[RMDB]
Description: This 177-nucleotide RNA was probed chemically with DMS and 2A3. The reactions ran in a buffer of 150 mM KOAc, 10 mM MgCl2 and 150 mM bicine (pH 8.5), at 24 C. Reactivities are given for positions 27 through 126.
RNA sequence: GGGAACGACUCGAGUAGAGUCGAAAAUGGUAGACACUUAAUGAUGAAUAGGUUGGGUUAGAUUUGAUUUGAGAUCUUGAGUCACCAGGCAGUCCCAAUUUUUUUUACGAAAUAUUAGGAGUGUGCUACCUUACGAUCUUUUCGAAGAUCGUAAGGUAAAAGAAACAACAACAACAAC
Reactivity to DMS in 0.01 (KOAc 150mM, MgCl2 10mM, bicine 150mM(pH8.5), 24C), signal-to-noise 3, nucleotides 027 to 126: u000g000g010u000a010g010a050c030a070c040u000u000a080a070u000g010a080u030g000a060a070u000a050g000g000u000u000g000g000g000u000u000a050g000a070u000u000u010g000a100u010u030u020g010a090g000a050u000c020u010u020g000a100g010u010c060a110c120c090a080g000g010c030a060g000u000c010c000c020a020a020u000u010u000u020u000u020u010u030a070c120g000a050a050a060u020a030u000u000a060g010g000a020g010u000g010u000g030c030u010
Reactivity to 2A3 in 0.01 (KOAc 150mM, MgCl2 10mM, bicine 150mM(pH8.5), 24C), signal-to-noise 3, nucleotides 027 to 126: u060g020g040u050a010g000a060c020a000c070u050u090a160a000u100g080a040u060g030a030a050u040a110g010g020u030u030g040g030g020u020u060a100g010a130u050u060u210g140a160u070u060u090g110a110g030a030u010c010u050u030g040a020g020u020c000a020c100c030a090g040g090c030a020g030u040c000c000c000a000a010u000u000u010u000u000u040u030u050a030c020g040a030a090a030u150a080u100u070a090g010g040a080g040u060g000u020g060c000u000